[RMDB]
RNA sequence: GGGAACGACUCGAGUAGAGUCGAAAACUCCAUUGCUUCGGCAAUGGAGAAACAGGACGUGAGACCGAAACGGAGCUAGGUCCAACUACCUUCUCACAAAAAAAACGCUUAGGUUCGCCUAAGCGAACCAAUCGUUAGACUUCGGUCUAACGAUUGGAAAAGAAACAACAACAACAAC
Reactivity to DMS in 0.01 (KOAc 150mM, MgCl2 10mM, bicine 150mM(pH8.5), 24C), signal-to-noise 4, nucleotides 027 to 126: c010u000c000c000a000u000u000g010c000u000u010c210g030g010c010a010a000u000g000g000a000g010a030a070a110c170a110g000g000a130c270g010u000g000a120g000a020c020c020g000a070a110a130c190g010g000a060g010c060u000a130g010g000u000c010c050a070a060c090u000a160c030c030u000u020c000u010c010a070c150a010a000a000a020a050a070a110a100c020g020c010u010u000a000g000g000u010u000c270g010c000c010u000a020a010g000c010g000a010a040
Reactivity to 2A3 in 0.01 (KOAc 150mM, MgCl2 10mM, bicine 150mM(pH8.5), 24C), signal-to-noise 5, nucleotides 027 to 126: c000u000c000c000a010u010u000g000c000u030u050c190g130g000c000a000a010u000g010g010a010g000a000a010a000c050a010g030g030a020c050g060u050g040a080g010a030c000c040g080a120a160a030c140g100g030a070g040c070u090a040g060g060u000c010c000a030a030c020u120a060c000c000u040u000c010u020c000a040c070a000a050a020a020a010a010a030a060c010g000c000u010u000a010g030g030u060u040c210g080c030c000u000a000a000g000c000g000a000a010